[RMDB]
RNA sequence: GGGAACGACUCGAGUAGAGUCGAAAAGGGUAAGGUGGUGCUCCUCAACUUCUGGGCCACGUGGUGCCCGCCGUGCCGUAUGGAGAUGCCGUCGAUCGAAACCAUGGUGAGGGCGCUUAAGGGAGAGCCACACGCAGAGAUUCGUCUCUGCGUGUGGAAAAGAAACAACAACAACAAC
Reactivity to DMS in 0.01 (KOAc 150mM, MgCl2 10mM, bicine 150mM(pH8.5), 24C), signal-to-noise 2, nucleotides 027 to 126: g000g000g000u000a060a110g000g010u010g040g020u000g000c040u000c010c030u010c120a080a110c080u010u000c020u010g000g020g030c030c030a120c100g000u020g020g030u000g030c020c010c000g040c060c020g000u000g010c060c080g010u000a050u000g020g010a200g000a080u010g000c030c040g020u000c040g020a070u000c080g020a170a100a080c070c020a060u000g010g010u010g020a080g000g000g020c050g010c060u010u010a060a150g000g000g000a080g000a180g010
Reactivity to 2A3 in 0.01 (KOAc 150mM, MgCl2 10mM, bicine 150mM(pH8.5), 24C), signal-to-noise 1, nucleotides 027 to 126: g100g040g060u120a020a140g010g040u100g000g070u040g000c020u020c000c040u070c030a030a110c060u200u070c090u190g000g010g080c040c020a040c070g050u070g030g010u030g000c000c020c040g000c030c010g000u040g000c000c020g040u000a090u160g060g000a040g000a050u130g050c070c000g120u160c050g030a100u080c040g000a080a010a020c010c010a010u050g010g060u060g080a150g010g040g000c010g030c040u090u110a090a050g000g000g000a070g000a010g010